[RMDB]
RNA sequence: GGGAACGACUCGAGUAGAGUCGAAAAUGACAUCUAAGGAAGUAACUGUAUCAUGUCCGGCCUUUAGCAUACCAAGAAAUGUAUCAAAAUAUGAAGGCAUAUGCUUUAGUGUUACUACAUCUAAAGAACUGUCCUUUCGUUUCGACGAAAGGACAGUAAAAGAAACAACAACAACAAC
Reactivity to DMS in 0.01 (KOAc 150mM, MgCl2 10mM, bicine 150mM(pH8.5), 24C), signal-to-noise 1, nucleotides 027 to 126: u010g010a010c120a060u000c090u000a080a290g000g020a080a120g040u000a050a160c260u060g000u000a020u040c050a060u000g020u000c000c040g000g000c040c000u020u000u000a000g000c000a160u000a170c020c150a050a040g040a070a080a070u000g000u000a000u000c210a030a040a000a000u000a080u030g020a080a020g000g000c010a130u020a070u010g000c040u000u000u000a040g020u000g000u000u010a130c250u020a040c000a120u000c020u000a000a030a040g000a040
Reactivity to 2A3 in 0.01 (KOAc 150mM, MgCl2 10mM, bicine 150mM(pH8.5), 24C), signal-to-noise 2, nucleotides 027 to 126: u000g000a020c060a030u010c140u110a130a080g090g020a070a000g040u040a070a100c050u000g050u150a060u080c020a040u040g060u090c130c080g110g000c010c010u000u000u120a000g000c020a020u100a060c000c000a000a100g060a170a070a070u100g030u050a190u040c020a080a020a120a160u120a090u180g120a070a020g000g000c000a030u000a030u290g050c000u030u000u050a030g000u000g000u220u120a000c000u100a000c000a060u060c040u120a000a000a000g060a030
Structure probing data (DMS and 2A3) for a 177-nucleotide construct. Values cover nucleotides 27 to 126. Source: RMDB library OK1LIB, as collected in RNAgym. The RNA was probed in 150 mM KOAc, 10 mM MgCl2 and 150 mM bicine (pH 8.5) at 24 C.